Conditions: 150 mM KOAc, 10 mM MgCl2 and 150 mM bicine (pH 8.5), 24 C. An RNA of 177 nucleotides, treated with DMS and 2A3 and read out base by base. The data come from the RNA Mapping Database (RMDB), library OK2TST.

RNA sequence: GGGAACGACUCGAGUAGAGUCGAAAAUUACAGAUAGCUUGCGGGUCGACAUCGCCCACCCAAUAGCGCUUGCCUUGCGCGUCGGUCAUGGGUACGGUACCCACAUCGAUCACCACCGCAUCCGUAGCAACCCGUCAUAGUUCGCUAUGACGGGUUGAAAAGAAACAACAACAACAAC
Reactivity to DMS in 0.01 (KOAc 150mM, MgCl2 10mM, bicine 150mM(pH8.5), 24C), signal-to-noise 3, nucleotides 027 to 126: u010u010a100c150a090g000a070u000a080g020c000u000u000g000c170g000g010g000u000c070g010a050c170a100u000c080g010c060c020c040a060c100c000c010a090a130u000a100g020c040g000c030u000u020g000c130c090u000u010g010c040g030c040g010u000c060g010g020u000c100a150u000g000g020g010u000a080c140g020g010u000a090c040c020c010a060c190a060u000c050g020a080u000c070a070c070c060a070c070c060g000c030a040u000c040c070g020u020a100g010
Reactivity to 2A3 in 0.01 (KOAc 150mM, MgCl2 10mM, bicine 150mM(pH8.5), 24C), signal-to-noise 1, nucleotides 027 to 126: u110u020a030c020a030g090a090u120a050g040c020u020u020g070c020g030g010g010u030c020g020a030c020a120u100c110g020c000c010c010a040c000c000c000a030a070u080a060g000c010g010c000u020u140g160c010c010u050u100g000c030g000c000g060u070c040g000g040u040c010a060u080g000g030g030u040a050c070g000g070u080a070c000c060c000a020c020a040u000c020g020a050u030c050a010c030c030a010c000c000g020c040a030u000c010c030g000u020a010g060